[RMDB]
RNA sequence: GGGAACGACUCGAGUAGAGUCGAAAAGUGGUCGAGUCCGAAGGACUGGGGUAGCGAAAUAAAGAGAGAGAGAGCUACCCCGUCAUUCAGUCACUCUCUGUCUGACUCUCUCUCUCAAAGACCACAAGCUAUGACCAUUAUUCGUAAUGGUCAUAGCAAAAGAAACAACAACAACAAC
Reactivity to DMS in 0.01 (KOAc 150mM, MgCl2 10mM, bicine 150mM(pH8.5), 24C), signal-to-noise 4, nucleotides 027 to 126: g020u000g000g010u010c010g010a120g010u000c010c010g020a120a140g000g010a070c050u020g020g000g010g000u010a020g000c020g030a110a120a140u010a030a070a130g000a030g000a020g000a020g000a060g010a090g000c030u000a020c010c010c000c010g020u000c010a040u000u020c050a020g000u030c260a150c220u020c090u010c030u010g010u010c020u010g020a030c000u020c010u010c000u000c000u000c000u010c000a080a080a130g000a010c010c000a000c000a100a150
Reactivity to 2A3 in 0.01 (KOAc 150mM, MgCl2 10mM, bicine 150mM(pH8.5), 24C), signal-to-noise 9, nucleotides 027 to 126: g010u010g000g000u010c020g030a030g050u030c040c040g120a150a100g080g010a010c050u080g000g000g010g010u000a000g020c040g130a130a090a040u270a060a210a010g010a000g000a000g000a000g000a000g000a000g010c010u010a010c000c000c000c000g000u010c000a000u020u020c010a010g040u030c040a060c180u090c020u020c020u040g020u010c020u020g010a030c000u000c000u000c000u000c000u000c000u000c010a020a040a010g010a010c000c000a000c010a020a010